Structure probing data (2A3 and DMS) for a 177-nucleotide construct. The reactions ran in a buffer of 150 mM KOAc, 10 mM MgCl2 and 150 mM bicine (pH 8.5), at 24 C. It was measured as part of the RMDB library OK1LIB. For 2A3 the reverse transcriptase was SuperScript II with manganese. For 2A3, 1,246 sequencing reads were counted.
RNA sequence: GGGAACGACUCGAGUAGAGUCGAAAAAUUUACAAUGGCUAGCUGCAGCAUCAUGGCACAUGCACCAAGGGUGCGCAGAUGCCUCCAGAGCAACGGUCGUCGUGCCAUCAUCAACGUAAGAGGAGCCCGGACUCAUAUCGUUCGCGAUAUGAGUCCGAAAAGAAACAACAACAACAAC
Reactivity to 2A3 in 0.01 (KOAc 150mM, MgCl2 10mM, bicine 150mM(pH8.5), 24C), signal-to-noise 2, nucleotides 027 to 126: a000u190u140u050a080c200a100a130u150g040g000c000u060a090g020c050u020g000c020a100g020c040a040u010c000a020u000g010g000c120a090c100a210u150g030c110a040c030c040a120a250g160g000g000u020g000c000g000c000a000g000a000u030g010c000c000u000c060c000a010g030a020g130c100a000a080c010g110g060u120c080g000u040c060g040u080g000c000c050a010u100c000a020u040c030a080a010c100g020u040a060a060g000a050g110g030a010g000c000c000
Reactivity to DMS in 0.01 (KOAc 150mM, MgCl2 10mM, bicine 150mM(pH8.5), 24C), signal-to-noise 1, nucleotides 027 to 126: a080u010u030u090a230c050a000a000u040g020g030c020u000a000g000c000u000g010c130a160g010c030a030u000c050a030u000g000g000c000a060c110a100u030g050c060a120c060c030a020a090g020g010g060u000g020c020g000c000a020g000a110u000g020c050c010u010c060c110a090g000a160g030c130a120a030c030g000g010u000c000g000u000c060g050u000g000c000c030a020u020c150a090u000c020a030a030c060g000u010a060a070g000a130g040g000a020g010c040c060